[RMDB]
RNA sequence: GGGAACGACUCGAGUAGAGUCGAAAAGAUAUGGAGACACCUUAGGGAGCGAAGUUCGGAAACGAACUAAUCGCAUCGAUCUAAGGGUGUCUCCUAAGUCAAAACGUUACUGCUUCGGCAGUAACGACGACCCUAUCGUGUUCGCACGAUAGGGUCGAAAAGAAACAACAACAACAAC
Reactivity to 2A3 in 0.01 (KOAc 150mM, MgCl2 10mM, bicine 150mM(pH8.5), 24C), signal-to-noise 1, nucleotides 027 to 126: g020a010u050a020u090g010g000a000g000a000c000a000c020c020u040u040a090g100g030g110a000g070c010g040a060a000g010u010u000c000g000g000a070a000a030c000g020a000a000c010u020a060a250u050c000g000c030a100u300c040g080a100u120c000u050a030a030g020g080g020u050g000u020c010u000c000c000u020a000a040g040u000c030a020a000a080a040c000g000u020u050a000c010u000g030c000u040u130c200g200g000c040a010g030u020a000a010c000g010a040
Reactivity to DMS in 0.01 (KOAc 150mM, MgCl2 10mM, bicine 150mM(pH8.5), 24C), signal-to-noise 1, nucleotides 027 to 126: g010a030u000a300u000g000g010a000g000a040c000a010c000c000u000u000a010g020g020g030a080g050c000g020a050a090g010u000u000c000g010g000a100a080a290c020g000a000a000c050u000a050a060u000c000g000c000a300u000c250g000a050u000c000u010a110a010g010g000g040u000g000u000c000u010c000c000u000a000a050g030u000c070a110a110a030a140c060g040u000u000a000c010u010g000c010u000u030c300g000g030c000a000g000u000a000a000c020g010a180